Chemical mapping of a 177-nucleotide RNA with 2A3 and DMS.
RNA sequence: GGGAACGACUCGAGUAGAGUCGAAAAGAAAGGUGUGAAUGACAUCCUGAUGCAGCACCUUUCUGAAUCAUCAGGUGUGGCUUACAUUACAGAGAAGAUAGUUAGAAUGGAGUCUUCAAAGUGGGUCGCGAUAGGAGAGAUUCGUCUCUCCUAUCGCAAAAGAAACAACAACAACAAC
Reactivity to 2A3 in 0.01 (KOAc 150mM, MgCl2 10mM, bicine 150mM(pH8.5), 24C), signal-to-noise 2, nucleotides 027 to 126: g020a000a000a010g030g010u010g000u050g130a300a260u120g000a080c010a090u050c040c070u070g050a050u010g020c060a050g010c000a020c000c000u000u000u010c010u020g010a000a040u060c030a010u020c000a040g070g000u030g070u090g070g000c000u060u020a060c000a110u060u080a020c040a050g100a000g000a090a000g000a010u060a060g130u210u150a150g090a150a040u130g120g030a010g050u000c000u000u050c070a060a030a010g050u040g040g010g050u050c050
Reactivity to DMS in 0.01 (KOAc 150mM, MgCl2 10mM, bicine 150mM(pH8.5), 24C), signal-to-noise 3, nucleotides 027 to 126: g010a000a030a020g000g010u000g020u010g010a170a120u010g010a150c100a110u000c050c080u020g040a040u000g000c140a200g000c010a020c010c000u000u010u000c010u000g000a130a070u000c060a030u000c060a050g000g020u010g000u000g000g010c030u000u000a050c080a100u020u000a110c160a050g020a300g020a040a060g000a020u000a080g010u020u000a170g010a090a110u000g010g010a140g020u010c010u010u000c020a040a030a140g010u010g010g000g000u000c050
The data come from the RNA Mapping Database (RMDB), library OK2TRN.
The RNA was probed in 150 mM KOAc, 10 mM MgCl2 and 150 mM bicine (pH 8.5) at 24 C.
For 2A3 the reverse transcriptase was SuperScript II with manganese.